[RMDB]
RNA sequence: GGGAACGACUCGAGUAGAGUCGAAAAAUUCCAAGCAGCAUACACGCUUUUGGCUUGCACAACCUUGGAUCCGGCGAUGUUGAAGUUGGAUGAGGGCGAAGGGUGGUACCGCUGGAGUGUUGCGAGGCACACACUCAUCCUUCGGGAUGAGUGUGUGAAAAGAAACAACAACAACAAC
Reactivity to 2A3 in 0.01 (KOAc 150mM, MgCl2 10mM, bicine 150mM(pH8.5), 24C), signal-to-noise 3, nucleotides 027 to 126: a000u160u000c010c000a020a000g020c040a020g040c000a030u040a020c070a110c180g090c040u100u040u090u220g040g000c020u010u130g000c040a050c000a120a000c040c040u010u060g070g010a020u030c000c000g010g020c050g080a080u140g060u180u080g050a110a050g030u040u000g050g020a050u090g040a080g040g000g010c050g070a120a010g000g000g010u080g010g000u040a080c060c030g010c030u040g100g070a050g050u040g040u090u000g000c000g010a030g030g010
Reactivity to DMS in 0.01 (KOAc 150mM, MgCl2 10mM, bicine 150mM(pH8.5), 24C), signal-to-noise 2, nucleotides 027 to 126: a210u010u060c050c000a130a110g010c000a020g000c070a090u000a080c030a090c090g000c090u010u040u040u040g000g030c090u000u000g000c070a140c060a130a140c060c060u020u000g000g000a030u010c020c000g000g060c040g050a160u020g050u040u000g000a090a100g000u000u010g020g010a000u010g010a030g000g000g000c110g040a150a140g020g000g000u010g020g000u030a020c110c040g000c000u000g000g020a160g000u000g030u000u010g030c000g000a020g030g030